[RMDB]
RNA sequence: GGGAACGACUCGAGUAGAGUCGAAAAUCGCACAGGUGUAAUCUAGCCUCUCCUAGGCUUUGUCUGUUACCUUCCUUGGGAAUUCCACUAGCCAGACAUAGCCUGACAGAGGUUAGGUGAAAUCUGAAUUAGUGUCCCCUUUCGAGGGGACACUAAUAAAAGAAACAACAACAACAAC
Reactivity to DMS in 0.01 (KOAc 150mM, MgCl2 10mM, bicine 150mM(pH8.5), 24C), signal-to-noise 1, nucleotides 027 to 126: u000c040g010c220a260c020a050g020g020u000g000u110a300a000u000c000u000a020g000c000c000u000c000u020c300c100u030a040g000g000c000u000u020u000g010u000c000u000g030u000u010a160c040c070u000u010c030c000u000u000g000g090g040a260a030u010u020c050c190a180c130u000a080g010c210c000a060g050a000c000a000u000a010g000c000c000u000g000a040c260a010g000a000g000g000u000u000a000g000g000u000g000a160a300a010u000c000u000g000a110
Reactivity to 2A3 in 0.01 (KOAc 150mM, MgCl2 10mM, bicine 150mM(pH8.5), 24C), signal-to-noise 2, nucleotides 027 to 126: u150c030g030c080a090c020a040g070g010u020g040u090a010a010u000c000u010a000g000c030c020u000c020u050c000c060u030a000g000g000c000u000u000u030g000u000c000u010g050u090u130a210c050c000u120u170c030c080u080u060g040g000g040a070a110u300u160c000c030a130c140u100a050g070c060c020a000g000a010c000a000u010a000g000c010c020u000g010a000c020a010g000a020g000g000u000u000a000g010g000u000g040a000a000a000u000c010u030g050a010